Annotation:
Structure probing data (2A3 and DMS) for a 177-nucleotide construct. The reactions ran in a buffer of 150 mM KOAc, 10 mM MgCl2 and 150 mM bicine (pH 8.5), at 24 C. For 2A3 the reverse transcriptase was SuperScript II with manganese. For DMS the reverse transcriptase was MarathonRT. Source: RMDB library TTRDES, as collected in RNAgym.

[RMDB]
RNA sequence: GGGAACGACUCGAGUAGAGUCGAAAAGAUAUGGACGUAUUCUGACCCUCUAUGAAGAUUCGUCGGAAACGACGAAUUGGAGAGGUGUCAGAGAUACGUCCUAAGUCAAAGGGUUCUUCGGAACCCACACCUGGUAGACGUUCGCGUCUACCAGGUGAAAAGAAACAACAACAACAAC
Reactivity to 2A3 in 0.01 (KOAc 150mM, MgCl2 10mM, bicine 150mM(pH8.5), 24C), signal-to-noise 2, nucleotides 027 to 126: g040a020u120a030u260g000g000a020c010g000u040a000u000u050c010u020g020a020c010c300c020u000c000u070a300u070g040a000a020g000a030u000u000c000g020u000c030g030g000a120a100a040c010g010a020c000g030a000a000u000u000g010g020a000g000a000g000g030u210g010u050c000a000g000a000g000a000u010a010c000g000u020c000c030u000a020a010g010u000c030a000a100a120g000g000g020u000u000c000u050u070c280g150g000a000a000c000c000c000a020
Reactivity to DMS in 0.01 (KOAc 150mM, MgCl2 10mM, bicine 150mM(pH8.5), 24C), signal-to-noise 2, nucleotides 027 to 126: g000a030u010a300u000g000g020a030c000g030u020a000u010u010c000u000g010a000c000c020c000u020c000u000a300u000g000a130a200g000a000u000u000c000g030u020c000g000g030a130a110a190c000g020a000c020g010a010a000u010u000g000g000a020g000a000g000g020u020g010u000c020a010g020a030g000a000u010a030c000g020u010c000c020u000a000a060g000u000c030a080a140a190g000g000g020u000u000c020u000u060c240g020g010a000a000c000c000c000a040